Chemical mapping of a 207-nucleotide RNA with DMS and 2A3.
For 2A3, 11,390 sequencing reads were counted.
The data come from the RNA Mapping Database (RMDB), library RNAMAK.
[RMDB]
RNA sequence: GGGAACGACUCGAGUAGAGUCGAAAAUGCGAUUCGUCGCAGCAACUACCUUUGUGCAGGUGGAGCGUGUAGACCCAGCGAAUCCCAUUGGGAUUCGAACUACUGGGUAUACACGCGUUGAAACCUGCACUCUGGUCUUUUAGCCGUUCGCGGCUAACCAUCAGAGAAUGUUCGCAUUCUCUGAUGGAAAAGAAACAACAACAACAAC
Reactivity to DMS in 0.01 (KOAc 150mM, MgCl2 10mM, bicine 150mM(pH8.5), 24C), signal-to-noise 1, nucleotides 027 to 156: u000g010c020g010a080u000u010c230g010u000c050g040c010a080g020c120a060a070c040u000a040c000c000u000u000u000g000u000g010c000a010g000g020u000g000g010a210g030c000g050u000g010u000a020g000a020c010c000c000a030g000c010g010a050a030u020c000c000c000a300u000u000g040g000g000a040u000u000c000g020a040a230c040u020a100c020u000g030g030g000u000a010u000a000c010a020c010g010c020g040u000u010g000a170a230a100c020c000u000g000c000a000c000u000c010u000g020g010u000c040u000u000u000u000a030g010c010c010g050u010u010c260g040c060g010g000c010u000a010a080
Reactivity to 2A3 in 0.01 (KOAc 150mM, MgCl2 10mM, bicine 150mM(pH8.5), 24C), signal-to-noise 6, nucleotides 027 to 156: u050g010c000g010a010u040u090c220g040u020c010g140c010a010g020c020a050a110c050u090a020c010c010u000u010u000g010u000g010c000a010g000g010u010g000g020a020g000c000g000u000g000u000a020g010a020c000c000c000a000g020c000g000a000a000u020c000c000c080a240u290u300g010g000g000a000u000u000c010g010a040a010c020u170a060c000u090g000g000g000u000a000u000a000c000a000c000g000c000g000u010u000g000a010a000a000c000c000u000g000c000a000c000u000c000u000g010g000u030c040u060u140u020u040a010g000c010c000g040u040u050c270g010c010g090g000c010u000a010a050